[RMDB]
RNA sequence: GGGAACGACUCGAGUAGAGUCGAAAAUACACGUCAUUGCGAUCACCCUGGCCAGCUUCGCUAUGAUGUACACUCCUCUUUCGCGCUGGUUCUUUAACACCUCGAAUGCUCUGCAGUCAUUCAGAUGCGACCCCAGGCAUUUCGAUGCCUGGGGUCGAAAAGAAACAACAACAACAAC
Reactivity to 2A3 in 0.01 (KOAc 150mM, MgCl2 10mM, bicine 150mM(pH8.5), 24C), signal-to-noise 1, nucleotides 027 to 126: u190a000c210a000c040g020u040c010a040u030u150g000c000g020a090u100c110a090c000c000c050u060g040g030c040c000a050g000c060u170u080c000g000c020u000a000u090g010a010u030g000u070a060c080a000c020u050c020c010u000c060u030u060u040c030g010c000g010c020u080g000g000u010u010c010u000u010u000a100a040c060a080c000c000u060c060g120a150a150u060g020c000u000c060u160g110c140a040g020u060c000a000u030u080c010a190g010a130u210g000
The record gives the reactivity of an RNA of 177 nucleotides to 2A3.
Values cover nucleotides 27 to 126.
It was measured as part of the RMDB library OK1LIB.
2A3 adducts were read by reverse transcription with SuperScript II with manganese.